[RMDB]
RNA sequence: GGGAACGACUCGAGUAGAGUCGAAAAUAGCAGGACCCACGCAAAGAUUAUUUUUAACGCCAUCUUGCAUGUCUUUGUUACCGCCUUUACCAAUGCCAGCGAUUUUGCCAUCUUUAAUACCAAUAUCGACAGUUUAAUACUUCGGUAUUAAACUGUCAAAAGAAACAACAACAACAAC
Reactivity to DMS in 0.01 (KOAc 150mM, MgCl2 10mM, bicine 150mM(pH8.5), 24C), signal-to-noise 2, nucleotides 027 to 126: u000a060g020c060a030g010g000a160c020c040c020a090c140g010c040a040a050a080g000a090u000u010a050u000u020u010u000u000a050a130c140g020c110c090a050u000c030u000u000g000c050a050u000g000u000c040u000u000u010g010u000u000a100c070c060g020c040c030u000u000u010a060c060c040a050a050u010g020c030c020a060g000c050g010a080u000u010u000u000g000c060c000a040u010c040u000u000u000a050a100u030a160c040c050a060a100u010a060u000c120
Reactivity to 2A3 in 0.01 (KOAc 150mM, MgCl2 10mM, bicine 150mM(pH8.5), 24C), signal-to-noise 3, nucleotides 027 to 126: u100a030g020c030a000g000g050a020c020c030c050a030c080g000c020a090a050a010g050a070u060u070a150u060u250u050u090u180a100a030c040g020c030c000a030u010c020u040u030g000c020a020u080g060u020c030u080u090u060g040u020u030a060c030c010g010c020c010u060u070u030a020c000c020a080a020u060g020c020c010a020g000c010g040a030u050u000u030u100g010c010c000a030u000c060u020u130u030a080a000u070a100c020c040a060a100u060a090u210c050
Conditions: 150 mM KOAc, 10 mM MgCl2 and 150 mM bicine (pH 8.5), 24 C. Structure probing data (DMS and 2A3) for a 177-nucleotide construct. It was measured as part of the RMDB library RFMREP.